An RNA of 177 nucleotides, treated with 2A3 and DMS and read out base by base. It was measured as part of the RMDB library M2PK50. Conditions: 150 mM KOAc, 10 mM MgCl2 and 150 mM bicine (pH 8.5), 24 C. The DMS profile rests on 803 reads.

[RMDB]
RNA sequence: GGGAACGACUCGAGUAGAGUCGAAAAUCUAACUUCUUCGGAAGUUAGAAAAUAAAAUCAGCGGUAAAUAUCGAGGCGUAAUUACCGCUGAACGCCUGGAUAAAAGAUUGUGCUUCGGCACAAUCAAGAACGGACUAAUGUUCGCAUUAGUCCGUUCAAAAGAAACAACAACAACAAC
Reactivity to 2A3 in 0.01 (KOAc 150mM, MgCl2 10mM, bicine 150mM(pH8.5), 24C), signal-to-noise 1, nucleotides 027 to 126: u020c000u010a020a000c010u010u000c000u010u080c190g150g000a010a000g000u000u000a000g020a000a020a010a000u030a010a020a010a050u000c000a000g000c010g010g020u030a040a040a030u120a050u130c150g170a160g150g110c060g020u000a000a010u020u010a000c000c000g000c000u000g000a010a000c020g050c020c020u060g130g090a070u140a100a150a040a030g010a010u000u000g000u000g000c030u040u040c120g030g000c000a000c000a010a000u000c000a000a030
Reactivity to DMS in 0.01 (KOAc 150mM, MgCl2 10mM, bicine 150mM(pH8.5), 24C), signal-to-noise 1, nucleotides 027 to 126: u010c000u000a020a000c000u000u000c000u020u010c210g020g000a020a000g020u010u020a000g000a000a030a050a090u000a020a060a190a090u020c010a000g040c000g020g000u020a030a010a070u010a020u000c050g010a200g020g030c080g020u020a040a010u020u000a000c000c040g000c000u000g000a000a070c160g010c040c010u000g050g000a140u010a070a130a100a160g010a020u000u000g000u010g010c000u000u000c140g020g050c000a010c000a000a000u000c000a080a020